[RMDB]
RNA sequence: GGGAACGACUCGAGUAGAGUCGAAAAGAUAUGGAGAGUCUCUGUAGGUCAUCGAUCAGGCUUCGGAAACGAAGCCUGGGAGACCGCAGAGAGCUCUCCUAAGUCAAAAGACUGGUUCGCCAGUCAACAUGUCACUAAUGUUCGCAUUAGUGACAUGAAAAGAAACAACAACAACAAC
Reactivity to 2A3 in 0.01 (KOAc 150mM, MgCl2 10mM, bicine 150mM(pH8.5), 24C), signal-to-noise 2, nucleotides 027 to 126: g000a030u110a040u170g020g010a020g020a040g040u000c010u010c010u020g090u140a300g030g040u050c070a220u300c250g130a130u090c050a000g000g020c010u010u000c000g030g060a070a060a060c000g000a030a120g000c050c010u000g000g010g000a020g020a000c000c010g000c010a010g000a000g010a000g020c000u000c000u000c000c000u000a010a000g000u010c010a000a020a080a200g010a000c010u020g000g130u080u100c300g080c100c000a010g000u010c000a000a010
Reactivity to DMS in 0.01 (KOAc 150mM, MgCl2 10mM, bicine 150mM(pH8.5), 24C), signal-to-noise 2, nucleotides 027 to 126: g000a100u010a300u000g000g000a030g010a020g010u000c000u000c000u010g010u000a100g080g000u020c000a300u000c160g040a070u010c000a020g000g020c010u000u020c000g000g010a170a110a220c010g030a030a030g000c000c010u000g000g020g010a070g020a020c020c010g000c000a000g000a030g000a050g010c010u000c000u000c010c000u000a000a100g040u010c070a130a120a140a120g010a000c000u000g000g000u000u010c250g030c000c000a040g000u000c010a070a270